[RMDB]
RNA sequence: GGGAACGACUCGAGUAGAGUCGAAAAGAUGGGCCGCAGUUCCCGACGAGGAGCCCGCAGGUGGGAGGAUCAGCCACCGGAGGGGACGCGAUGCCAAAGAGUGGGGGAAAUCUCGCGAGGGAAAUCCAAAGUCCUCGGUUCGCCGAGGACAAAAGAAACAACAACAACAAC
Reactivity to 2A3 in 0.01 (KOAc 150mM, MgCl2 10mM, bicine 150mM(pH8.5), 24C), signal-to-noise 2, nucleotides 027 to 129: g120a010u110g010g010g020c000c000g060c070a040g030u060u010c010c000c000g000a050c010g010a010g020g010a000g060c000c030c000g030c060a050g000g130u130g000g020g000a030g010g000a080u040c030a020g020c000c010a030c020c000g050g000a020g020g000g040g000a010c030g000c010g030a060u110g030c000c000a020a050a000g060a010g010u140g000g000g000g000g000a000a000a060u040c000u000c000g030c010g020a050g020g000g000a050a090a010u030c030c000a040a080a000
Reactivity to DMS in 0.01 (KOAc 150mM, MgCl2 10mM, bicine 150mM(pH8.5), 24C), signal-to-noise 4, nucleotides 027 to 129: g010a050u080g050g000g020c090c040g000c120a090g010u010u000c030c010c050g000a120c090g010a100g030g030a120g040c140c010c010g000c160a050g010g030u060g060g010g020a050g000g000a080u050c100a190g000c080c080a070c050c010g120g000a200g010g000g060g000a050c100g000c120g010a080u100g000c110c060a060a070a110g030a110g060u100g000g000g000g000g000a020a050a140u040c030u020c030g020c130g010a130g050g020g010a020a040a100u050c000c000a040a130a040
Conditions: 150 mM KOAc, 10 mM MgCl2 and 150 mM bicine (pH 8.5), 24 C. Structure probing data (2A3 and DMS) for a 170-nucleotide construct. 2A3 adducts were read by reverse transcription with SuperScript II with manganese. The DMS profile rests on 7,815 reads. The 2A3 profile rests on 4,862 reads. The data come from the RNA Mapping Database (RMDB), library 15KLIB.